[RMDB]
Background:
This 177-nucleotide RNA was probed chemically with DMS and 2A3. DMS adducts were read by reverse transcription with MarathonRT.
RNA sequence: GGGAACGACUCGAGUAGAGUCGAAAACAAGCAAAUAUCUCCAGAGGGGAUUAGUCACAUUGCUUCAAAGUUAACAAAAACAAAGAGAGCAGAGGCAGCUUCACUGGGAACAACACCCGUCCAUCAAGUUAUCAUCUACUUUCGAGUAGAUGAUAACAAAAGAAACAACAACAACAAC
Reactivity to DMS in 0.01 (KOAc 150mM, MgCl2 10mM, bicine 150mM(pH8.5), 24C), signal-to-noise 5, nucleotides 027 to 126: c100a090a080g010c080a070a080a110u020a050u000c010u000c000c040a090g010a130g030g000g000g020a010u020u000a070g010u020c030a080c170a100u020u000g000c020u000u000c060a100a070a130g000u000u010a070a130c180a060a050a040a060a060c070a050a090a140g000a100g000a050g020c020a010g020a080g030g000c030a050g000c010u010u000c020a050c030u000g020g000g020a020a060c110a070a060c120a070c040c000c020g000u040c080c070a030u000c120a060a110
Reactivity to 2A3 in 0.01 (KOAc 150mM, MgCl2 10mM, bicine 150mM(pH8.5), 24C), signal-to-noise 9, nucleotides 027 to 126: c030a020a000g070c030a050a100a050u150a060u050c050u010c030c010a040g050a110g130g030g010g010a060u080u090a070g030u020c010a040c020a190u050u070g010c000u030u040c030a120a090a030g020u030u060a140a090c090a100a130a060a010a010c040a030a140a020g120a020g000a000g000c020a000g000a030g050g000c010a010g010c010u020u010c010a030c060u030g010g010g040a050a030c020a050a020c010a040c010c000c010g030u030c040c010a120u100c070a130a020